The record gives the reactivity of an RNA of 177 nucleotides to 2A3 and DMS. The data come from the RNA Mapping Database (RMDB), libraries RFM100 and RFMREP. As a SHAPE reagent, 2A3 marks flexible, mostly unpaired nucleotides at the ribose 2'-OH. Conditions: 150 mM KOAc, 10 mM MgCl2 and 150 mM bicine (pH 8.5), 24 C. Reactivities are given for positions 27 through 126.
[RMDB]
RNA sequence: GGGAACGACUCGAGUAGAGUCGAAAAGAUUGUGUAUCAUACAAACUGCUUGGGGAAUGGUUUUGGUUUGAGAACCGAUGAAGGACGUGCCAAGCUGCGAUAUGCCUUGGGGAGGUGCAUGGAGCCAUCCCACCGACUAUUUCGAUAGUCGGUGGGAAAAAGAAACAACAACAACAAC
Reactivity to 2A3 in 0.01 (KOAc 150mM, MgCl2 10mM, bicine 150mM(pH8.5), 24C), signal-to-noise 2, nucleotides 027 to 126: g130a040u080u070g020u010g070u110a020u190c010a030u060a240c080a030a090a000c000u000g010c020u000u030g000g000g010g070a010a270u090g020g210u010u060u040u150g150g000u000u030u130g180a200g000a010a040c010c000g060a150u090g040a060a080g000g010a070c050g000u040g090c000c000a000a000g000c040u020g070c000g110a000u040a030u120g010c060c050u080u030g050g040g000g000a030g000g040u020g000c010a000u090g030g070a020g000c040c060a040
Reactivity to DMS in 0.01 (KOAc 150mM, MgCl2 10mM, bicine 150mM(pH8.5), 24C), signal-to-noise 2, nucleotides 027 to 126: g010a080u020u000g010u000g000u000a100u000c070a090u040a070c130a100a070a120c040u010g000c010u000u020g000g000g010g010a100a150u010g000g020u040u000u000u000g010g010u000u000u000g020a120g010a080a050c050c030g020a090u070g010a070a080g000g010a050c060g000u010g000c010c020a020a060g000c060u000g010c070g000a110u010a050u000g000c030c020u010u000g030g000g000g010a070g000g040u010g000c030a170u020g000g000a120g000c020c030a130